[RMDB]
RNA sequence: GGGAACGACUCGAGUAGAGUCGAAAAGAUAUGGAACGUCAGAAGGAGCAUUCCGGACAGCUAUGUGUGUCGGAAACGACACACUAAGGCUGUCCGGAAUGAACUACUCUGGUGACGUUCCUAAGUCCUUAUCUCUCCAGUUCGCUGGAGAGAUAAGAAAAGAAACAACAACAACAAC
Reactivity to DMS in 0.01 (KOAc 150mM, MgCl2 10mM, bicine 150mM(pH8.5), 24C), signal-to-noise 3, nucleotides 027 to 126: g020a070u000a300u010g020g010a000a020c000g010u010c000a000g040a300a300g010g000a050g000c000a010u000u000c000c000g010g010a020c000a000g000c000u010a300u030g000u010g000u010g000u000c000g020g010a200a070a180c000g030a010c010a020c010a000c000u000a020a140g010g010c000u000g000u000c000c000g000g010a000a000u000g000a020a050c070u000a300c010u000c000u020g000g000u000g020a010c010g010u000u000c000c000u010a020a080g000u000c010